[RMDB]
RNA sequence: GGGAACGACUCGAGUAGAGUCGAAAAGCCGAUGAAUUGCCGAGAAGCCUGGCUCGAAAUUGUCGACGCAUCGACGACGGUCCUGCCAUGAGACCGUAACGAGGACAUGUCGCCUCGAAUGGCGUCGUAUAACAUGAGUGGUUCGCCACUCAUGUAACAUUUAAUGCUGCUUCGGCAGCAUUAAAUGAAAAGAAACAACAACAACAAC
Reactivity to DMS in 0.01 (KOAc 150mM, MgCl2 10mM, bicine 150mM(pH8.5), 24C), signal-to-noise 3, nucleotides 027 to 156: g010c020c020g020a100u010g000a050a140u000u010g020c040c040g010a140g000a130a090g020c050c040u000g010g000c030u020c020g000a060a070a080u000u010g030u000c000g020a040c050g000c050a150u000c000g000a020c010g010a070c010g020g020u000c000c010u000g000c050c210a110u020g000a080g000a040c010c020g030u010a020a090c060g000a110g030g010a100c050a120u000g020u000c030g030c000c000u000c020g000a090a090u010g000g010c010g010u000c020g000u000a080u000a130a070c000a010u010g010a030g030u000g010g010u000u000c300g020c020c000a000c010u000c000a000u010g000u000a040a120
Reactivity to 2A3 in 0.01 (KOAc 150mM, MgCl2 10mM, bicine 150mM(pH8.5), 24C), signal-to-noise 4, nucleotides 027 to 156: g060c010c010g010a020u120g060a060a200u150u110g040c040c020g050a050g030a120a020g020c040c080u090g030g000c030u030c040g070a060a070a080u110u130g070u080c010g010a020c030g010c050a060u040c010g020a030c010g010a010c010g020g000u010c010c000u050g110c040c010a130u110g030a050g030a160c020c050g010u020a010a010c020g010a000g000g000a010c040a100u170g030u090c060g020c040c030u020c000g010a050a050u100g060g030c000g000u030c010g010u060a080u020a180a010c000a000u000g000a000g000u000g000g020u050u060c160g030c060c000a000c000u010c000a000u010g000u000a000a000
Source information: Source: RMDB library M2RFPK, as collected in RNAgym. Chemical mapping of a 207-nucleotide RNA with DMS and 2A3. The RNA was probed in 150 mM KOAc, 10 mM MgCl2 and 150 mM bicine (pH 8.5) at 24 C.